[RMDB]
This 207-nucleotide RNA was probed chemically with DMS and 2A3. It was measured as part of the RMDB library OK3TST. For DMS the reverse transcriptase was MarathonRT. The RNA was probed in 150 mM KOAc, 10 mM MgCl2 and 150 mM bicine (pH 8.5) at 24 C.
RNA sequence: GGGAACGACUCGAGUAGAGUCGAAAAAAAAGCGAAUUAUGUCAGAGGGCAUCAAAUGAGUAAAGUGAUUGAAAAGUAGAGGCUGUCUCCUCCAGCAGUGGUUUGAAUAACUCCUACCUGCUUUCUGCUUUAGAGCAAAGAGAAAACAAGAGACAUACUACCAUACGUGAUUCGUCACGUAUGGUAGAAAAGAAACAACAACAACAAC
Reactivity to DMS in 0.01 (KOAc 150mM, MgCl2 10mM, bicine 150mM(pH8.5), 24C), signal-to-noise 2, nucleotides 027 to 156: a000a020a030a020g040c040g000a110a050u000u000a050u000g020u000c040a080g010a090g000g010g020c050a060u000c050a050a060a060u000g010a120g010u000a040a050a050g010u000g010a100u000u020g010a070a040a030a120g000u010a040g010a050g030g030c020u010g000u010c050u000c040c000u000c090c030a080g020c060a080g040u000g000g010u000u000u010g020a100a070u000a040a060c060u000c030c000u000a030c040c020u000g000c010u000u000u000c040u010g010c030u000u000u000a110g010a060g000c080a040a020a070g010a080g000a040a040a020a030c030a040a070g010a120g000a050c020a090u000a180
Reactivity to 2A3 in 0.01 (KOAc 150mM, MgCl2 10mM, bicine 150mM(pH8.5), 24C), signal-to-noise 3, nucleotides 027 to 156: a010a020a000a010g090c080g020a080a050u260u090a070u180g040u030c010a020g030a030g040g020g030c000a010u040c070a050a110a070u140g050a050g020u100a070a040a000g040u040g030a090u100u100g030a110a030a030a020g060u070a020g010a020g020g010c020u020g040u020c020u010c020c000u000c040c000a010g010c020a020g040u060g060g050u000u100u140g110a080a070u080a080a010c010u020c030c010u020a060c020c000u010g000c000u060u050u020c020u060g060c000u080u070u120a090g000a000g000c010a020a080a000g040a030g010a010a090a030a020c060a050a040g030a010g030a070c040a040u140a060